[RMDB]
RNA sequence: GGGAACGACUCGAGUAGAGUCGAAAAGUGACACUAUAUGAGAUUCGUGGGGUUUAGUGUUGGGUAGGGUGAUAUUUAAGGAAUAUAUCGAUAUUCAAUAUUUAAAUAUCUUUCUCAUUCUCAUUAGCUAUUAUUUAUACUUCGGUAUAAAUAAUAGAAAAGAAACAACAACAACAAC
Reactivity to 2A3 in 0.01 (KOAc 150mM, MgCl2 10mM, bicine 150mM(pH8.5), 24C), signal-to-noise 1, nucleotides 027 to 126: g040u010g020a020c000a010c020u040a040u050a030u220g030a010g000a030u090u000c060g000u020g010g010g000g020u010u110u080a000g010u020g020u040u060g010g000g020u060a020g030g010g030u040g010a020u000a000u000u000u020a000a000g000g000a020a000u020a010u020a050u090c030g050a010u000a020u040u010c010a090a030u140a220u130u040u030a000a000a000u000a060u000c000u000u100u010c030u020c000a020u040u000c010u000c000a060u040u050a040g000
Reactivity to DMS in 0.01 (KOAc 150mM, MgCl2 10mM, bicine 150mM(pH8.5), 24C), signal-to-noise 1, nucleotides 027 to 126: g000u040g010a100c020a020c040u000a030u060a020u020g000a010g000a070u020u020c120g010u000g040g020g010g010u030u010u030a020g000u010g000u030u030g000g010g050u030a070g000g000g000u000g000a000u000a000u000u000u000a010a030g000g000a020a000u010a010u000a060u020c060g010a060u000a000u000u000c000a040a110u080a120u050u010u000a000a000a000u000a000u000c000u000u020u030c020u030c000a100u000u000c000u000c020a060u000u040a090g010
Overview: An RNA of 177 nucleotides, treated with 2A3 and DMS and read out base by base. For DMS the reverse transcriptase was MarathonRT. The 2A3 profile rests on 912 reads.